Conditions: 150 mM KOAc, 10 mM MgCl2 and 150 mM bicine (pH 8.5), 24 C. Chemical mapping of a 170-nucleotide RNA with 2A3 and DMS. For 2A3 the reverse transcriptase was SuperScript II with manganese.
RNA sequence: GGGAACGACUCGAGUAGAGUCGAAAAAAACAGGAGGAGGAUCGGUAGAAAAGAGCGAGACCUCCGAUUCGAGAGCUCCUGGACUCCUCAGCUCUGGAGUCCUCCGACCCGUGAGGUCGAGGAUCCCGUGGGCAAGGCUUCGGCCUUGCCAAAAGAAACAACAACAACAAC
Reactivity to 2A3 in 0.01 (KOAc 150mM, MgCl2 10mM, bicine 150mM(pH8.5), 24C), signal-to-noise 4, nucleotides 027 to 129: a000a020a020c020a000g000g010a000g010g010a030g020g000a010u010c000g000g060u230a080g100a050a110a060a010g110a010g060c080g000a020g060a090c000c010u000c000c000g000a000u020u010c040g010a040g020a030g190c000u000c000c000u010g020g050a040c010u020c010c020u070c010a080g040c020u010c000u030g000g000a040g060u040c000c000u000c030c070g000a010c010c000c020g140u180g040a130g000g020u000c000g000a000g000g000a010u020c000c000c020g050u100g020
Reactivity to DMS in 0.01 (KOAc 150mM, MgCl2 10mM, bicine 150mM(pH8.5), 24C), signal-to-noise 4, nucleotides 027 to 129: a000a000a000c050a070g010g030a070g050g040a110g050g010a080u000c000g030g020u050a110g010a050a110a100a060g010a220g050c160g040a070g010a190c150c000u010c040c010g020a020u000u000c040g000a100g030a130g070c070u000c000c000u020g010g000a070c070u000c010c010u040c110a030g030c010u010c030u070g010g040a040g020u030c010c000u030c120c060g040a020c020c000c070g010u080g000a160g020g000u040c000g020a000g000g000a070u070c020c000c050g040u020g020